The record gives the reactivity of an RNA of 207 nucleotides to 2A3. The 2A3 profile rests on 391 reads. Conditions: 150 mM KOAc, 10 mM MgCl2 and 150 mM bicine (pH 8.5), 24 C.
RNA sequence: GGGAACGACUCGAGUAGAGUCGAAAACUGGGUGACAGAGUGAGAGCCCAUCUCAACAACAACAAAGAAGACUGACAAAUGCAGUUUCUUGGAAAGAAACAUUUAGUAGGAACUUAACCUACACACAGAAGCCAAGUCGGUGUCUCGGUGUCAGUGAACUAGUCCAGGGUUUCGACCCUGGACUAGUAAAAGAAACAACAACAACAAC
Reactivity to 2A3 in 0.01 (KOAc 150mM, MgCl2 10mM, bicine 150mM(pH8.5), 24C), signal-to-noise 1, nucleotides 027 to 156: c070u070g000g040g000u050g080a020c050a280g100a030g150u110g030a150g030a030g000c000c000c070a070u030c030u030c000a000a270c000a010a000c000a020a010c010a010a150a060g030a060a000g150a080c000u050g040a070c050a020a260a100u140g040c040a070g010u000u000u000c000u000u060g050g080a180a150a060g020a040a020a020c000a010u140u120u070a070g010u000a000g000g020a160a000c020u080u040a020a000c000c010u010a000c000a020c000a000c000a040g080a220a000g000c000c020a030a020g060u050c030g080g030u020g040u030c060u010c020g070g010u010g010u020c060a060g080u060g050a010
2A3 adducts were read by reverse transcription with SuperScript II with manganese.